An RNA of 177 nucleotides, treated with 2A3 and DMS and read out base by base.
[RMDB]
RNA sequence: GGGAACGACUCGAGUAGAGUCGAAAAGAUAUGGAGAGCCGAUAAGCACGUAUCGGAAACGAUACAGUGCUUUUGACGGCUCCUCCUAAGUCAAACGGCCUUCCUUGGUUCGCCAAGGAAGGCCGAACAUAUAGACGAUGUUCGCAUCGUCUAUAUGAAAAGAAACAACAACAACAAC
Reactivity to 2A3 in 0.01 (KOAc 150mM, MgCl2 10mM, bicine 150mM(pH8.5), 24C), signal-to-noise 2, nucleotides 027 to 126: g010a010u060a010u110g000g000a010g000a000g010c010c020g050a120u070a170a010g000c000a010c020g000u000a010u000c000g010g040a110a040a010c030g000a000u010a020c090a070g000u000g000c020u010u000u000u010g030a010c010g000g010c000u020c020c000u000c000c000u020a140a010g070u020c030a060a030a100c020g000g010c010c000u020u000c010c000u000u000g000g010u080u090c300g040c100c000a000a000g000g000a000a020g010g000c000c000g000a000a000
Reactivity to DMS in 0.01 (KOAc 150mM, MgCl2 10mM, bicine 150mM(pH8.5), 24C), signal-to-noise 8, nucleotides 027 to 126: g000a040u010a300u010g000g010a020g010a060g010c000c000g010a150u000a030a010g010c000a010c000g000u000a000u000c000g010g010a080a060a130c000g010a010u000a000c010a110g040u000g010c000u000u000u000u000g010a190c090g010g000c000u000c120c020u000c000c000u010a050a120g000u000c030a070a090a260c020g010g000c000c000u000u000c000c000u000u000g000g000u000u010c250g010c000c000a010a000g000g010a000a010g000g020c010c000g000a000a020
2A3 adducts were read by reverse transcription with SuperScript II with manganese. The RNA was probed in 150 mM KOAc, 10 mM MgCl2 and 150 mM bicine (pH 8.5) at 24 C. It was measured as part of the RMDB library TTRDEL.